[RMDB]
RNA sequence: GGGAACGACUCGAGUAGAGUCGAAAACAGCGGCAAAAGCCGCAAUGCGGCGGCGCCAGAAGAAGACUGGCGAUGUAACGCGAAGUAACCGAAAGAAAAGUCGGACCGCUGCACUUCGCUUACAAAACAUCCAUCUGACCUUCGGGUCAGAUGGAUGAAAAGAAACAACAACAACAAC
Reactivity to 2A3 in 0.01 (KOAc 150mM, MgCl2 10mM, bicine 150mM(pH8.5), 24C), signal-to-noise 3, nucleotides 027 to 126: c060a010g010c020g010g020c030a160a150a170a080g010c000c000g010c010a000a050u090g000c000g000g000c000g000g000c010g000c010c000a000g000a070a040g110a080a000g070a060c000u010g000g000c010g050a040u070g030u020a050a000c080g000c000g000a000a010g030u060a020a050c000c050g010a090a120a010g230a070a240a040a000g230u130c040g010g010a050c000c000g000c000u000g020c010a000c000u000u000c010g000c000u010u020a000c000a000a100a000a010
Reactivity to DMS in 0.01 (KOAc 150mM, MgCl2 10mM, bicine 150mM(pH8.5), 24C), signal-to-noise 1, nucleotides 027 to 126: c040a090g020c000g000g070c090a070a020a000a110g020c000c000g040c000a000a040u010g000c040g010g050c000g050g040c000g000c020c020a040g000a120a060g020a150a120g000a080c040u000g000g000c000g020a300u000g020u000a020a020c140g030c020g000a000a030g020u020a070a090c000c000g010a000a030a040g050a050a050a280a170g000u000c070g000g010a100c100c020g020c040u000g020c080a020c000u020u000c000g030c000u120u000a030c020a050a110a080a090